The record gives the reactivity of an RNA of 177 nucleotides to 2A3 and DMS.
Reactivities are rounded to 0.1 and cut off at 0 and 3.
It was measured as part of the RMDB library OK2TST.
The RNA was probed in 150 mM KOAc, 10 mM MgCl2 and 150 mM bicine (pH 8.5) at 24 C.
High DMS reactivity at an A or C suggests that its Watson-Crick edge is free.

RNA sequence: GGGAACGACUCGAGUAGAGUCGAAAAUGAGGGUCAUCGCCCCGUACCAUGCCAGAAAUAGGUUCAUCGGGUGCUACAAAAUGCCAUCGCGGCGAGACAGAUGAAUGGAUUUUGCACAUGGUGUGCAUAAUUUAUUAGCUUUCGAGCUAAUAAAUUAAAAAGAAACAACAACAACAAC
Reactivity to 2A3 in 0.01 (KOAc 150mM, MgCl2 10mM, bicine 150mM(pH8.5), 24C), signal-to-noise 6, nucleotides 027 to 126: u110g010a140g040g040g040u100c050a080u070c130g050c010c000c000c000g000u000a020c000c010a020u040g020c000c020a040g060a030a070a030u100a030g080g000u020u020c010a010u030c030g240g000g100u140g080c010u060a070c060a070a190a040a060u190g010c010c000a060u190c170g020c100g080g000c010g000a010g020a010c030a010g030a030u030g010a020a020u040g080g040a030u030u030u020u070g030c030a010c000a040u040g060g000u030g030u020g020c000a030
Reactivity to DMS in 0.01 (KOAc 150mM, MgCl2 10mM, bicine 150mM(pH8.5), 24C), signal-to-noise 9, nucleotides 027 to 126: u010g010a140g010g010g010u070c080a100u010c140g010c020c010c010c020g010u000a040c030c020a030u000g000c270c060a300g010a030a040a050u000a060g010g020u000u000c030a020u000c020g010g020g010u010g010c040u010a120c150a040a060a080a080u010g010c020c020a130u010c140g010c200g010g010c020g000a060g000a060c040a110g000a040u000g000a040a030u000g010g000a080u000u000u000u000g000c210a080c010a070u000g000g010u000g010u000g010c090a100